Annotation: This 177-nucleotide RNA was probed chemically with DMS and 2A3. For 2A3, 58,632 sequencing reads were counted. The RNA was probed in 150 mM KOAc, 10 mM MgCl2 and 150 mM bicine (pH 8.5) at 24 C. Values are in units of 0.01, from 0 to 300, in steps of 10. Reactivities are given for positions 27 through 126. Source: RMDB library OK1LIB, as collected in RNAgym. The DMS profile rests on 42,801 reads.

[RMDB]
RNA sequence: GGGAACGACUCGAGUAGAGUCGAAAAACUAGUAUGUACAGGGGUGAGUUGACCUGUCAUCUAGACUGCUGACCCUCAACUCACCGGUCAGCUGGAUGAUGUCCACAGAGUACGACAUCAGUACUCAGAGUAAGGAAGCGUUCGCGUUUCUUUACUCAAAAGAAACAACAACAACAAC
Reactivity to DMS in 0.01 (KOAc 150mM, MgCl2 10mM, bicine 150mM(pH8.5), 24C), signal-to-noise 9, nucleotides 027 to 126: a170c010u000a000g000u050a000u000g010u050a010c010a020g000g000g010g030u020g000a070g020u000u000g010a070c030c030u010g000u000c000a000u000c010u000a010g010a180c050u010g000c010u000g000a020c010c050c040u020c120a050a070c090u020c070a070c180c300g000g010u000c000a010g000c000u010g000g010a050u020g000a090u010g000u000c010c040a090c200a090g000a030g000u000a020c040g010a130c160a100u040c110a080g000u000a010c010u000c000a160
Reactivity to 2A3 in 0.01 (KOAc 150mM, MgCl2 10mM, bicine 150mM(pH8.5), 24C), signal-to-noise 9, nucleotides 027 to 126: a000c010u010a010g040u110a060u060g060u080a010c000a010g040g020g030g040u110g070a100g040u040u050g080a070c000c010u000g000u000c000a000u000c000u010a020g040a080c040u030g000c000u000g000a000c000c010c000u040c030a050a110c010u020c040a040c020c000g000g010u000c000a000g000c010u020g020g020a050u090g010a020u070g060u020c010c010a050c040a070g020a000g020u030a010c050g090a030c080a150u120c030a050g010u010a010c010u010c030a010